An RNA of 177 nucleotides, treated with DMS and 2A3 and read out base by base.

RNA sequence: GGGAACGACUCGAGUAGAGUCGAAAAGAUAUGGAGUGUCUGCGUGAUGACCUACAUGUUUGUCGGAAACGAUGAUAUGUAGCAAGCGCUGACACUCCUAAGUCAAAGCCUCGCUUCGGCGAGGCAAUCGAAAGGGUAGGUUCGCCUACCCUUUCGAAAAAGAAACAACAACAACAAC
Reactivity to DMS in 0.01 (KOAc 150mM, MgCl2 10mM, bicine 150mM(pH8.5), 24C), signal-to-noise 2, nucleotides 027 to 126: g000a000u000a300u010g000g000a010g010u000g000u000c000u000g010c000g050u000g010a090u030g020a140c300c000u000a010c000a000u000g010u000u000u010g010u000c000g000g020a050a080a130c000g010a060u000g010a040u000a010u000g010u000a000g000c020a110a070g000c030g000c000u000g000a010c000a000c000u010c000c000u000a010a030g010u000c010a120a090a160g000c000c000u000c000g010c000u000u000c180g030g000c000g000a000g000g010c000a000a000
Reactivity to 2A3 in 0.01 (KOAc 150mM, MgCl2 10mM, bicine 150mM(pH8.5), 24C), signal-to-noise 1, nucleotides 027 to 126: g080a020u080a030u090g020g000a010g000u010g000u000c000u040g000c010g040u040g100a300u170g070a150c000c000u020a010c000a010u050g130u220u220u280g090u020c010g010g000a020a080a060c040g010a010u050g000a030u020a000u030g000u020a010g040c090a080a210g010c000g010c000u030g020a000c000a000c010u010c000c010u000a000a000g000u000c010a010a100a000g010c000c010u000c000g010c000u080u070c290g140g000c000g000a000g000g050c010a000a010
Notes: The 2A3 profile rests on 1,855 reads. Conditions: 150 mM KOAc, 10 mM MgCl2 and 150 mM bicine (pH 8.5), 24 C. For DMS, 1,451 sequencing reads were counted.